[RMDB]
RNA sequence: GGGAACGACUCGAGUAGAGUCGAAAAUUACUCGUGUUCAACUUCAGGCCAACCUGGCGCUUAUCAAGCAUCAGCAGAAGCAGGACGAGAUCAUUCGAGCCAAAGAACUCAAAGAGCAAGGAUUGUCUAACGUAGCCAUCGGCCUCGAAAUGGACAAGCACUAAUCAAAGUUCGCUUUGAUUAGUGCAAAAGAAACAACAACAACAAC
Reactivity to 2A3 in 0.01 (KOAc 150mM, MgCl2 10mM, bicine 150mM(pH8.5), 24C), signal-to-noise 6, nucleotides 027 to 156: u110u080a060c020u010c060g050u020g020u040u020c050a120a100c050u040u010c010a000g000g000c020c010a020a050c060c030u020g040g000c000g000c000u150u150a190u300c130a120a010g000c020a020u040c020a010g030c040a040g040a210a000g020c030a030g060g030a010c030g010a000g010a030u040c010a010u020u040c000g000a010g000c010c010a100a100a050g120a130a100c060u060c170a040a120a030g060a010g010c010a010a020g010g010a030u030u030g010u000c010u020a070a050c040g030u020a020g010c010c000a070u080c100g010g000c020c010u020c050g010a010a010a010u040g000g010a000c010a020a030
Reactivity to DMS in 0.01 (KOAc 150mM, MgCl2 10mM, bicine 150mM(pH8.5), 24C), signal-to-noise 1, nucleotides 027 to 156: u000u000a160c010u010c030g010u030g000u000u010c010a090a120c060u000u010c020a030g050g020c070c040a000a240c090c000u020g010g070c060g000c000u000u010a120u010c150a070a120g060c000a040u000c030a130g010c040a070g010a080a080g040c010a130g010g040a080c020g020a190g010a150u000c080a250u010u010c030g000a100g020c000c020a080a060a090g020a050a010c000u020c020a000a060a040g000a090g000c070a040a220g040g000a180u010u000g010u010c010u010a140a100c090g000u010a100g000c050c060a080u010c030g020g020c030c020u000c010g030a010a020a070u000g010g000a030c030a000a230
Description
Chemical mapping of a 207-nucleotide RNA with 2A3 and DMS. The data come from the RNA Mapping Database (RMDB), library OK3TST. The reactions ran in a buffer of 150 mM KOAc, 10 mM MgCl2 and 150 mM bicine (pH 8.5), at 24 C. DMS adducts were read by reverse transcription with MarathonRT.